[RMDB]
RNA sequence: GGGAACGACUCGAGUAGAGUCGAAAAAUGCGGAUUCCGCCCACGGAGAGUGCCAGACGCACGCUAUUUGUGGUGUGGCAUGUGCAAAUAUUUGCACUAUGCAUAGUUACCUCGCAUCCGGGUAUAACUAAUAGUCUAAGUUCGCUUAGACUAUUAGAAAAGAAACAACAACAACAAC
Reactivity to DMS in 0.01 (KOAc 150mM, MgCl2 10mM, bicine 150mM(pH8.5), 24C), signal-to-noise 9, nucleotides 027 to 126: a050u000g010c020g010g010a190u000u000c050c020g010c020c010c010a030c020g010g010a020g000a060g010u000g000c000c090a200g010a150c240g010c010a020c010g000c030u000a060u000u010u010g040u000g000g010u020g040u000g010g010c090a020u000g010u000g000c000a010a040a210u010a140u010u000u000g010c000a010c000u010a040u000g010c010a090u010a090g000u000u000a060c070c020u000c060g010c050a050u000c020c020g000g010g020u000a090u010a080a220
Reactivity to 2A3 in 0.01 (KOAc 150mM, MgCl2 10mM, bicine 150mM(pH8.5), 24C), signal-to-noise 9, nucleotides 027 to 126: a000u050g000c020g050g020a050u120u000c020c010g000c000c000c010a020c010g020g010a030g000a010g010u020g010c040c070a130g050a230c090g010c030a000c010g010c030u090a140u150u120u230g030u020g010g020u160g010u030g140g000c020a010u030g000u000g010c000a000a030a060u300a160u130u080u020g000c000a010c040u140a020u040g000c000a010u050a070g020u020u060a060c010c010u030c040g020c010a030u030c010c000g010g040g060u140a110u030a210a030
The data come from the RNA Mapping Database (RMDB), library OK2TST. This 177-nucleotide RNA was probed chemically with DMS and 2A3. Reactivities are given for positions 27 through 126.